[RMDB]
RNA sequence: GGGAACGACUCGAGUAGAGUCGAAAAAAACUUCUGCCGAUAUUCUGGUGGUUGAUGAGGUUAGUAUGUGCACUAAUUAUGAUCUUUCAAUUAUUAAUGCACGUAUUAAAGCUAAGCACAUUGUCUAACGGUGGUGUCUUCGGACACCACAAAAGAAACAACAACAACAAC
Reactivity to DMS in 0.01 (KOAc 150mM, MgCl2 10mM, bicine 150mM(pH8.5), 24C), signal-to-noise 1, nucleotides 027 to 129: a050a040a160c000u000u040c000u030g030c040c020g020a160u030a050u040u040c060u000g020g020u020g000g060u080u070g000a160u020g020a120g030g050u000u000a000g040u000a020u000g010u010g000c030a010c060u000a000a130u000u000a030u020g020a000u010c120u070u030u010c080a140a070u070u010a010u010u010a010a040u020g010c000a020c030g050u000a010u030u000a000a000a000g110c050u000a050a040g020c110a020c000a120u000u000g040u020c130u060a050a090c090g040
Reactivity to 2A3 in 0.01 (KOAc 150mM, MgCl2 10mM, bicine 150mM(pH8.5), 24C), signal-to-noise 4, nucleotides 027 to 129: a000a000a030c040u040u020c030u080g030c000c030g100a060u040a030u220u110c110u090g060g000u010g000g000u090u020g060a140u060g040a000g070g000u010u000a000g000u000a000u010g010u030g000c000a010c030u000a000a000u000u060a010u000g100a120u020c160u040u260u060c080a080a000u060u000a000u000u000a000a000u020g020c000a010c000g000u010a000u000u020a070a030a000g090c020u030a040a000g060c010a010c010a090u020u140g020u050c030u050a140a010c010g010

Chemical mapping of a 170-nucleotide RNA with DMS and 2A3.
DMS adducts were read by reverse transcription with MarathonRT.
The reactions ran in a buffer of 150 mM KOAc, 10 mM MgCl2 and 150 mM bicine (pH 8.5), at 24 C.
Values are in units of 0.01, from 0 to 300, in steps of 10.
For DMS, 6,602 sequencing reads were counted.